[RMDB]
RNA sequence: GGGAACGACUCGAGUAGAGUCGAAAAGUAUGUCGUUGUCUACGUCGACCGAGCGUCCGUGCCAAGCGCUACGUCACCAGGGGAUAACUGUCGGAAGGCGGUUAGUCCCGGGUGCAUAAGGAGUCGUGGAUGGUUCAGGACCGAAAGGUAGCAGACAGGUAGUUCUUAUGUUCGCAUAAGAACUACCAAAAGAAACAACAACAACAAC
Reactivity to 2A3 in 0.01 (KOAc 150mM, MgCl2 10mM, bicine 150mM(pH8.5), 24C), signal-to-noise 2, nucleotides 027 to 156: g090u090a070u130g050u050c060g010u030u110g040u020c050u100a080c090g050u040c020g010a050c030c000g010a040g090c120g020u000c030c000g020u000g000c000c000a110a050g020c000g000c010u020a040c020g060u070c030a000c000c000a020g000g000g030g000a000u000a010a010c000u000g000u000c010g060g130a140a060g050g000c000g010g030u010u000a050g110u060c010c000c010g000g000g010u000g010c010a060u080a100a130g150g030a030g020u210c020g020u020g110g110a110u070g010g010u060u030c210a270g000g000a010c020c000g110a130a090a030g030g010u040a030g080c060a040g000a010c010a000